[RMDB]
The record gives the reactivity of an RNA of 177 nucleotides to 2A3 and DMS.
The reactions ran in a buffer of 150 mM KOAc, 10 mM MgCl2 and 150 mM bicine (pH 8.5), at 24 C.
For DMS, 2,087 sequencing reads were counted.

RNA sequence: GGGAACGACUCGAGUAGAGUCGAAAAUGCACCCUCCGAUCUCUCUCUUCUAUCGCAUGCGCAGGAGCGGAUACCCACUUGUACGUCUUCCUCCCGGAUAACCUCCACCGACUCUGUGGAACCGCGUGUAUGGUUUUAUGUUCGCAUAAAACCAUACAAAAGAAACAACAACAACAAC
Reactivity to 2A3 in 0.01 (KOAc 150mM, MgCl2 10mM, bicine 150mM(pH8.5), 24C), signal-to-noise 2, nucleotides 027 to 126: u080g000c000a070c030c030c000u030c000c040g090a110u000c030u000c000u010c010u000c000u130u000c040u090a100u100c020g000c110a040u120g010c030g020c040a040g020g130a040g050c010g040g020a010u110a100c000c010c000a040c030u020u110g130u220a060c080g030u010c040u040u050c010c030u010c050c000c040g060g000a020u030a070a040c000c030u000c020c010a040c020c000g110a080c050u030c040u090g050u010g030g050a020a050c020c020g000c020g050u040
Reactivity to DMS in 0.01 (KOAc 150mM, MgCl2 10mM, bicine 150mM(pH8.5), 24C), signal-to-noise 3, nucleotides 027 to 126: u020g010c090a150c050c030c040u010c040c020g010a070u000c050u020c040u010c010u000c040u000u000c040u010a080u000c080g010c080a090u000g010c050g020c090a100g010g000a100g000c060g000g000a100u020a060c020c010c020a100c110u000u000g030u000a060c070g010u000c010u000u000c010c000u000c030c020c000g010g020a060u000a060a150c070c020u000c000c020a060c020c040g000a120c080u000c030u000g020u000g000g000a060a130c060c040g000c140g010u000